[RMDB]
RNA sequence: GGGAACGACUCGAGUAGAGUCGAAAAGGGGUCAGCCGUUUGACGAAGCUGACAUGCGUAUACACUGAAGCCUCCACGGUGUAUAGCGCAACAGCAGCUUCCGAGGCUGACGGAGGCACCCAAAACGGAUCUUUCAGUUUCGACUGAAAGAUCCGAAGACUGCCUUAUACUUCGGUAUAAGGCAGUCAAAAGAAACAACAACAACAAC
Reactivity to 2A3 in 0.01 (KOAc 150mM, MgCl2 10mM, bicine 150mM(pH8.5), 24C), signal-to-noise 1, nucleotides 027 to 156: g150g040g050g000u020c000a000g000c020c000g000u080u150u130g010a010c000g000a000a020g000c000u030g020a290c060a090u150g000c000g020u020a000u000a000c010a000c000u000g000a060a020g000c000c000u000c000c000a030c010g000g010u000g020u010a040u020a090g190c010g000c010a030a220c060a150g000c000a000g000c020u000u010c000c000g020a030g000g000c000u010g000a000c000g010g000a000g020g020c000a020c010c000c000a060a070a030a040c020g000g000a000u000c000u010u000u000c020a010g010u010u140u160c160g110a030c010u000g000a000a000a000g000a000u000c000c000g000a000a010